[RMDB]
Structure probing data (2A3) for a 177-nucleotide construct.
RNA sequence: GGGAACGACUCGAGUAGAGUCGAAAACUGCUGGGUGUGGAGAUGUUCGUCGAGGAGGGAGAGCGAAGAAGGAUCCGCGUCUGGCAGGAAGAGCCGCGCUUCGCAGGCACUUUGCUUUUUUUCCUCCCCAUCGAGGCCAUUUCGAUGGCCUCGAUGGAAAAGAAACAACAACAACAAC
Reactivity to 2A3 in 0.01 (KOAc 150mM, MgCl2 10mM, bicine 150mM(pH8.5), 24C), signal-to-noise 2, nucleotides 027 to 126: c020u020g000c030u050g010g000g000u020g000u020g020g000a050g010a060u210g000u100u020c020g020u010c010g040a090g060g040a060g010g120g000a070g000a010g070c050g010a000a010g020a050a130g230g080a060u000c000c010g000c000g000u010c020u060g020g000c010a000g020g060a030a000g070a020g000c010c000g020c040g010c080u170u300c090g020c050a160g000g060c010a030c090u130u080u090g050c030u110u200u050u000u020u040u000c000c000u000c080c000
The data come from the RNA Mapping Database (RMDB), library OK1LIB.